Structure probing data (2A3 and DMS) for a 177-nucleotide construct. DMS adducts were read by reverse transcription with MarathonRT. For 2A3, 3,146 sequencing reads were counted. Conditions: 150 mM KOAc, 10 mM MgCl2 and 150 mM bicine (pH 8.5), 24 C. The DMS profile rests on 2,599 reads. The data come from the RNA Mapping Database (RMDB), library M2PK50.
[RMDB]
RNA sequence: GGGAACGACUCGAGUAGAGUCGAAAAGCCAUCGCUUUCGAGCGAUGGCAUUGCCCAAAGAGGACCUGGGGGAGUCUGGGCUGCUAAACUCAUCAGCCGUUCUACCGCUAAAUUUCGAUUUAGCGAACAGUCCUACAGUGUUCGCACUGUAGGACUGAAAAGAAACAACAACAACAAC
Reactivity to 2A3 in 0.01 (KOAc 150mM, MgCl2 10mM, bicine 150mM(pH8.5), 24C), signal-to-noise 1, nucleotides 027 to 126: g010c000c000a000u010c000g030c000u050u050u160c270g100a010g000c000g010a010u000g000g000c000a000u000u100g040c000c000c000a040a100a000g100a030g030g010a030c020c020u040g050g000g000g000g000a000g020u000c020u070g020g030g030c010u030g000c000u130a170a110a020c030u020c070a130u010c010a050g010c010c010g010u020u000c040u120a170c040c000g000c010u020a000a000a020u050u060u050c120g030a030u000u030u010a000g000c000g000a030a020
Reactivity to DMS in 0.01 (KOAc 150mM, MgCl2 10mM, bicine 150mM(pH8.5), 24C), signal-to-noise 3, nucleotides 027 to 126: g010c000c000a000u000c000g030c000u010u010u010c180g010a010g020c000g000a010u000g010g020c010a010u000u000g000c000c000c010a090a140a120g010a130g010g000a060c040c030u010g000g000g000g010g010a150g010u000c020u010g010g010g020c020u000g020c160u010a060a110a100c150u020c100a060u010c030a010g000c000c010g020u000u000c030u000a120c130c030g010c000u000a000a000a020u000u000u010c140g000a040u000u000u000a000g000c000g020a070a170